[RMDB]
RNA sequence: GGGAACGACUCGAGUAGAGUCGAAAACAGAGUAUCAGGAGCGAUCGGCGCAGGAAUUACCGAACUGUGGCUCGGCGGCAAGUAUGGCUGCGCAAGGGAAUUUUUACGGCACUGACCGUUCUACGGAAAUUCCCCAAGAAUUCGUUCUUGGGGAAUUAAAAGAAACAACAACAACAAC
Reactivity to 2A3 in 0.01 (KOAc 150mM, MgCl2 10mM, bicine 150mM(pH8.5), 24C), signal-to-noise 2, nucleotides 027 to 126: c020a020g080a010g090u070a060u160c070a050g030g060a060g000c030g040a040u050c020g010g000c040g000c010a020g000g080a100a070u100u020a070c010c000g020a060a050c030u070g000u050g090g010c040u010c060g030g000c030g040g000c030a030a090g030u050a100u200g070g000c040u050g000c010g000c010a010a020g040g000g030a010a050u080u000u020u030u170a050c030g030g010c000a020c120u050g070a060c020c010g020u070u010c020u070a100c010g020g000a030
Reactivity to DMS in 0.01 (KOAc 150mM, MgCl2 10mM, bicine 150mM(pH8.5), 24C), signal-to-noise 4, nucleotides 027 to 126: c050a150g010a130g000u010a090u020c070a090g010g020a070g020c050g010a050u000c060g010g010c060g010c030a050g000g010a090a070u010u010a070c050c030g010a090a070c100u000g010u010g030g010c030u000c070g020g010c040g000g010c090a040a080g010u010a100u010g010g010c050u000g020c060g010c030a070a080g000g000g000a060a020u000u010u000u010u010a070c070g000g000c030a080c090u000g010a080c030c010g010u000u000c060u000a090c120g010g000a070